[RMDB]
RNA sequence: GGGAACGACUCGAGUAGAGUCGAAAACGGGAGCUGUUGGAUGCCGAGAUGGGCGAAGACCUGCGCGAGACAUAUUACGCAGCCGUUACUGUAAUCAGCCGACUGCUCGCGUUGCAGCAACAGCUUGAUCGCACGGAGAAGCAGCCGUGAAGUGGGGCGAUAAAUGCGGAUUCGUCCGCAUUUAUCGAAAAGAAACAACAACAACAAC
Reactivity to 2A3 in 0.01 (KOAc 150mM, MgCl2 10mM, bicine 150mM(pH8.5), 24C), signal-to-noise 1, nucleotides 027 to 156: c050g000g100g010a020g000c010u000g060u000u000g090g020a190u110g020c120c040g000a050g040a170u160g010g030g030c090g060a090a000g060a110c040c000u060g010c020g000c010g000a020g020a010c000a020u280a030u070u300a040c140g000c000a000g030c020c020g020u060u120a080c040u150g030u070a040a170u190c000a000g090c010c010g070a100c020u000g000c000u010c020g100c030g010u010u000g020c050a000g020c000a000a010c000a030g000c000u000u040g040a090u060c090g000c010a020c090g070g000a060g060a190a010g040c060a000g030c000c000g010u000g000a010a000g180u200g010g020g010g000
Source: RMDB library OK3TST, as collected in RNAgym. Chemical mapping of a 207-nucleotide RNA with 2A3. The reactions ran in a buffer of 150 mM KOAc, 10 mM MgCl2 and 150 mM bicine (pH 8.5), at 24 C. 2A3 is a SHAPE reagent: it acylates the 2'-hydroxyl of flexible nucleotides of all four kinds.